[RMDB]
RNA sequence: GGGAACGACUCGAGUAGAGUCGAAAAUACUGUACUGCCAAUCUCCAAGUUCCAUACAAAACAGAGUGCUGUAAGAGCACAGAGAAGACAGCAACUCACUAUUUGGCCAACAUUUUGUAUCUUAUAGACUUCAUUCAGCAUUUCUGUAACAAACAUGAAAUCACCCUUGGUUCGCCAAGGGUGAUUUAAAAGAAACAACAACAACAAC
Reactivity to 2A3 in 0.01 (KOAc 150mM, MgCl2 10mM, bicine 150mM(pH8.5), 24C), signal-to-noise 1, nucleotides 027 to 156: u110a010c060u010g060u060a100c070u050g030c030c000a030a070u050c020u030c040c010a010a070g080u020u010c030c000a040u030a120c120a030a060a080a000c000a040g000a000g000u000g000c000u000g010u030a010a040g010a050g020c060a050c060a080g080a010g000a060a000g130a000c000a030g130c020a020a160c060u060c010a050c010u050a070u100u040u060g020g030c040c080a030a080c030a090u050u130u130u030g010u040a100u010c020u050u080a010u010a030g040a080c000u020u020c080a120u000u020c000a000g000c000a040u190u200u000c040u020g030u090a030a030c120a070a020a060c040a060u140g130
Chemical mapping of a 207-nucleotide RNA with 2A3. The 2A3 profile rests on 407 reads. Source: RMDB library OK3TST, as collected in RNAgym. Values are in units of 0.01, from 0 to 300, in steps of 10.